[RMDB]
Notes
The record gives the reactivity of an RNA of 177 nucleotides to DMS.
RNA sequence: GGGAACGACUCGAGUAGAGUCGAAAAAUGUGCUGGCUGCGUAAACGACCUCUGGGUGCUGCAUGGCUGUCGUAAAUUCAUGCCGUGGGGUGUGGUUUUUGGUAACUGAAUGAAUGCGACCUAUGGAUCCGCAUGAAAAGUUCGCUUUUCAUGCGGAAAAAGAAACAACAACAACAAC
Reactivity to DMS in 0.01 (KOAc 150mM, MgCl2 10mM, bicine 150mM(pH8.5), 24C), signal-to-noise 1, nucleotides 027 to 126: a110u010g020u000g030c080u000g020g000c030u000g010c050g030u010a050a080a130c050g010a050c030c030u000c060u000g050g010g040u000g020c040u000g010c000a040u010g020g000c080u000g090u000c060g000u000a070a040a120u000u000c060a040u000g010c000c040g030u010g010g000g010g010u010g020u010g010g000u000u000u030u010u050g010g020u000a000a040c110u010g000a090a070u000g000a030a040u000g000c030g000a050c040c020u000a060u010g000g010a200